Chemical mapping of a 177-nucleotide RNA with DMS and 2A3.
Values cover nucleotides 27 to 126.
[RMDB]
RNA sequence: GGGAACGACUCGAGUAGAGUCGAAAAGGCGGGGCUCGUUGCCGACGGCGACACCGAGGUCCACGAUGUAUUCCACAUCGAUCGCGGAUAUCCGUUGUUCGUGGAGAACCUGGUGAGUCUCGGUGCCGACGAGUCUGGACUUCGGUCCAGACUCGUCAAAAGAAACAACAACAACAAC
Reactivity to DMS in 0.01 (KOAc 150mM, MgCl2 10mM, bicine 150mM(pH8.5), 24C), signal-to-noise 1, nucleotides 027 to 126: g000g000c020g020g040g000g020c100u000c000g040u000u010g050c020c060g010a060c140g010g030c050g030a190c020a040c040c010g000a000g010g010u000c010c000a080c000g020a100u000g030u070a050u000u000c050c050a140c110a090u030c150g000a040u000c170g000c010g000g020a300u000a130u000c030c100g000u000u040g030u000u000c050g000u010g000g000a090g000a090a060c030c040u020g000g020u000g000a170g010u000c000u000c020g000g000u000g020c030c040
Reactivity to 2A3 in 0.01 (KOAc 150mM, MgCl2 10mM, bicine 150mM(pH8.5), 24C), signal-to-noise 1, nucleotides 027 to 126: g000g000c090g010g000g030g000c030u020c040g080u050u050g100c030c000g040a050c050g020g050c000g030a080c000a000c000c000g060a010g020g030u120c040c000a010c030g060a030u030g030u220a150u050u090c030c010a040c000a130u130c080g000a020u030c020g030c000g020g010a090u080a130u300c010c040g040u010u230g090u050u060c000g000u050g010g010a100g000a020a030c000c000u000g080g000u000g020a080g030u050c010u000c000g000g000u020g020c040c020
The DMS profile rests on 834 reads. The data come from the RNA Mapping Database (RMDB), library OK2TRN.